This 177-nucleotide RNA was probed chemically with 2A3 and DMS. Values cover nucleotides 27 to 126. Reactivities are rounded to 0.1 and cut off at 0 and 3. Source: RMDB library OK2TRN, as collected in RNAgym.

RNA sequence: GGGAACGACUCGAGUAGAGUCGAAAAGCGCGUACCGACUGUGGCGCCUGACGGUACCGUAUACACUAGCUAGCGCACGAUCGCGUACGUCGAGCGCCUGAUCGAGCAGGCCAGCGCAGCUGUAGCGGGCUAGUGUAAGCUUCGGCUUACACUAGCCAAAAGAAACAACAACAACAAC
Reactivity to 2A3 in 0.01 (KOAc 150mM, MgCl2 10mM, bicine 150mM(pH8.5), 24C), signal-to-noise 2, nucleotides 027 to 126: g000c020g040c080g050u010a020c020c020g090a040c070u050g010u120g100g040c030g040c070c010u030g040a030c030g040g000u060a010c010c010g100u170a150u060a090c110a030c060u040a020g020c020u000a020g000c000g000c050a040c010g010a040u080c050g000c090g090u110a090c010g020u040c030g040a040g030c060g000c000c020u060g010a100u130c090g040a030g070c000a000g060g000c010c040a040g020c010g070c000a010g000c030u050g000u110a020g040c150g090
Reactivity to DMS in 0.01 (KOAc 150mM, MgCl2 10mM, bicine 150mM(pH8.5), 24C), signal-to-noise 2, nucleotides 027 to 126: g020c040g010c110g000u010a000c060c020g000a090c030u000g020u010g010g000c000g060c030c010u030g030a080c050g000g070u000a030c030c050g020u010a170u000a100c100a100c110u010a100g020c010u000a050g040c030g040c010a280c020g030a050u000c080g000c170g050u000a030c050g000u000c060g020a050g000c000g030c000c010u000g010a070u000c140g000a070g030c010a060g010g010c020c070a110g000c010g010c050a090g000c070u000g000u010a080g000c200g020